[RMDB]
RNA sequence: GGGAACGACUCGAGUAGAGUCGAAAAAAAGGUUCAGGUGCCAGGCAGCCACGGAAGCUCCGGGGAGGCAUGAAGACAUGAGGGUUAGAUUGUAGCAGGUCACGUCCACCACCCUCACUGUCCAUGACAGGUAAGUUCUCUUCGGAGAACUUACCUGAAAAGAAACAACAACAACAAC
Reactivity to DMS in 0.01 (KOAc 150mM, MgCl2 10mM, bicine 150mM(pH8.5), 24C), signal-to-noise 1, nucleotides 027 to 126: a040a020a070g000g010u000u000c050a030g010g040u000g000c030c010a080g010g010c050a040g000c080c030a060c100g000g040a140a140g000c050u000c070c010g000g010g000g010a090g020g000c020a010u000g000a140a100g020a030c020a080u000g030a050g000g020g010u010u010a040g000a060u000u010g010u000a110g000c040a080g030g000u000c090a030c080g000u000c060c020a050c140c070a040c000c000c010u010c000a030c100u000g010u000c000c040a030u010g000a300